[RMDB]
Structure probing data (2A3) for a 177-nucleotide construct. 2A3 adducts were read by reverse transcription with SuperScript II with manganese. It was measured as part of the RMDB library OK1LIB.
RNA sequence: GGGAACGACUCGAGUAGAGUCGAAAAGCUCGGAGACGAGCAAGGCUGACAAAACACUGUCCCAACCUCCACGUGGUGUCGGCUGGAUAAUGCUGCAUUAUGUUGCAUUUAUCAACUGGGAAGCAAACAGGCCUGCUGAGUUCGCUCAGCAGGCCUGAAAAGAAACAACAACAACAAC
Reactivity to 2A3 in 0.01 (KOAc 150mM, MgCl2 10mM, bicine 150mM(pH8.5), 24C), signal-to-noise 1, nucleotides 027 to 126: g000c000u000c000g020g000a090g000a170c080g000a000g000c000a000a020g030g000c030u000g030a040c000a000a170a100a050c180a000c010u080g040u000c000c000c000a060a130c040c110u130c080c030a040c140g130u000g000g050u040g000u000c030g040g000c000u000g120g030a010u000a020a000u010g000c000u000g000c030a030u060u210a110u300g000u000u060g000c060a010u010u170u130a030u070c030a030a060c000u000g000g030g030a060a060g120c130a000a000a040